[RMDB]
RNA sequence: GGGAACGACUCGAGUAGAGUCGAAAAGAUUACGUGUCGUUGUGGAAUCGAUACUACGCACGAGAUUCCAAGGUCUCUGUAGUACGUCCGCUGGUGACGUCUUUGGAGUCACGUUGGAUAUACGAAAGGUAACUCCUAGGUUCGCCUAGGAGUUACCAAAAGAAACAACAACAACAAC
Reactivity to 2A3 in 0.01 (KOAc 150mM, MgCl2 10mM, bicine 150mM(pH8.5), 24C), signal-to-noise 2, nucleotides 027 to 126: g110a090u130u120a090c000g000u010g100u120c040g040u000u050g030u060g150g140a050a270u280c100g000a000u020a070c000u070a020c010g020c050a060c090g020a000g080a060u020u000c050c000a000a000g140g020u040c000u030c040u060g000u030a010g000u050a000c010g000u000c000c050g000c300u230g170g050u290g000a010c060g000u020c000u000u050u140g020g000a000g000u010c020a020c060g040u010u040g000g020a020u090a000u040a060c060g010a210a010a000
Reactivity to DMS in 0.01 (KOAc 150mM, MgCl2 10mM, bicine 150mM(pH8.5), 24C), signal-to-noise 2, nucleotides 027 to 126: g040a170u020u060a140c040g000u020g010u000c010g000u020u000g000u000g000g010a080a100u020c190g000a140u000a090c020u000a020c030g040c060a070c070g000a300g000a130u000u000c050c020a060a030g000g040u010c010u000c000u010g000u000a020g000u090a000c040g020u000c000c000g040c210u040g040g020u070g020a000c040g040u000c040u000u020u010g000g000a020g020u000c060a060c030g000u000u000g000g010a050u010a070u070a090c060g020a120a130a090